Chemical mapping of a 177-nucleotide RNA with 2A3 and DMS. The 2A3 profile rests on 5,159 reads.
RNA sequence: GGGAACGACUCGAGUAGAGUCGAAAAGGCCACCAACCAUUUGGGUACUGCCCACACUUCAGCCUGCGUGCGUGUAAUCGACCACACGGACGUUGUGACUGAGACUCAGAACGAACAAUCGCUGGAGAUUUAAGGGGUAGUUCGCUACCCCUUAAAUAAAAGAAACAACAACAACAAC
Reactivity to 2A3 in 0.01 (KOAc 150mM, MgCl2 10mM, bicine 150mM(pH8.5), 24C), signal-to-noise 4, nucleotides 027 to 126: g030g030c060c030a040c030c030a050a060c040c040a100u090u060u170g060g000g010u070a110c030u130g000c000c020c000a040c010a000c040u050u030c000a000g000c020c010u010g000c010g010u030g030c050g020u010g010u010a110a140u130c130g110a070c050c000a010c000a000c010g050g080a000c010g020u020u030g050u040g070a100c010u040g030a010g010a050c020u000c050a060g030a140a050c050g050a080a040c060a100a100u080c050g000c060u020g030g030a100g030
Reactivity to DMS in 0.01 (KOAc 150mM, MgCl2 10mM, bicine 150mM(pH8.5), 24C), signal-to-noise 7, nucleotides 027 to 126: g010g010c030c050a120c050c040a060a120c120c070a160u000u000u000g010g010g010u000a080c120u000g000c020c010c020a120c200a120c100u000u000c020a020g000c000c020u010g000c010g010u000g000c010g020u000g000u000a050a080u010c280g010a140c200c110a030c010a010c010g010g000a020c020g010u000u000g020u000g000a110c020u000g000a060g010a130c120u000c030a040g010a070a080c070g010a100a080c140a060a060u000c110g000c040u000g000g010a120g010